[RMDB]
RNA sequence: GGGAACGACUCGAGUAGAGUCGAAAACCAGCAGCCAUGUCCUACCAGGCUGCGGUGCGGCUCGCCGCACAGGUCAUCCCUCAUCGGGCGCGUCCUGCGUCCUUCCACGCCAACCCACAAGGGAUCUAAAACACGUUGGGCUUCGGCCCAACGUGAAGAUUCCGGUAUUGUUCGCAAUACCGGAAUCAAAAGAAACAACAACAACAAC
Reactivity to 2A3 in 0.01 (KOAc 150mM, MgCl2 10mM, bicine 150mM(pH8.5), 24C), signal-to-noise 1, nucleotides 027 to 156: c000c000a040g000c000a010g000c010c020a180u090g060u150c040c050u130a110c000c060a030g010g010c000u000g000c010g000g000u010g030c000g000g000c040u110c130g120c010c000g040c010a010c060a000g050g080u070c030a040u030c030c010c010u040c000a120u160c020g020g000g000c020g010c010g060u110c060c070u150g000c000g070u010c000c000u030u050c010c010a060c070g030c000c040a050a040c050c020c010a100c010a160a070g040g000g000a010u040c020u150a050a040a010a040c020a000c000g000u000u000g010g000g010c000u000u110c250g060g000c060c000c010a010a010c000g010u010g000a000a000